[RMDB]
RNA sequence: GGGAACGACUCGAGUAGAGUCGAAAAGCAACAUUAUCUUUUGAUGCUCCUACUGUUCCUCCUCGCAAGUAUCUUGAGACUUUACAGCCCAACCAAUCGGUUUGUAUUGCAAUUGGUGCUAUGGCUCAUGGUCCGGACGAUUUUUCGGAUGGUUGGAUAAUUACCCUAGGUUCGCCUAGGGUAAUUAAAAAGAAACAACAACAACAAC
Reactivity to DMS in 0.01 (KOAc 150mM, MgCl2 10mM, bicine 150mM(pH8.5), 24C), signal-to-noise 2, nucleotides 027 to 156: g020c030a050a070c050a070u000u010a080u010c080u000u010u020u000g010a050u000g010c020u000c020c010u000a050c050u000g000u000u000c010c010u000c040c040u000c040g010c060a090a090g000u010a050u000c030u010u000g020a180g010a040c030u000u000u010a080c040a100g010c000c010c040a070a100c030c040a040a020u000c050g040g010u000u010u010g020u010a100u010u000g030c020a070a110u000u000g020g020u010g030c030u000a110u000g000g020c010u000c020a060u000g020g000u000c010c010g000g020a110c080g010a130u000u000u010u000u010c020g000g010a030u010g030g000u000u000g020g010a220
Reactivity to 2A3 in 0.01 (KOAc 150mM, MgCl2 10mM, bicine 150mM(pH8.5), 24C), signal-to-noise 4, nucleotides 027 to 156: g020c030a000a110c010a120u070u130a120u150c050u000u090u020u050g060a030u100g050c030u040c010c000u030a060c030u070g080u030u030c010c010u010c010c000u040c030g010c010a090a050g050u030a050u040c010u020u080g020a050g060a140c010u040u060u090a080c120a000g010c000c000c000a030a100c180c010a020a020u020c050g160g000u090u110u160g110u130a030u010u050g000c020a060a020u000u030g040g000u170g030c010u030a040u060g030g000c020u010c050a030u080g020g000u030c010c010g070g010a050c030g060a060u060u040u060u150u140c020g040g010a020u040g070g000u030u050g020g020a030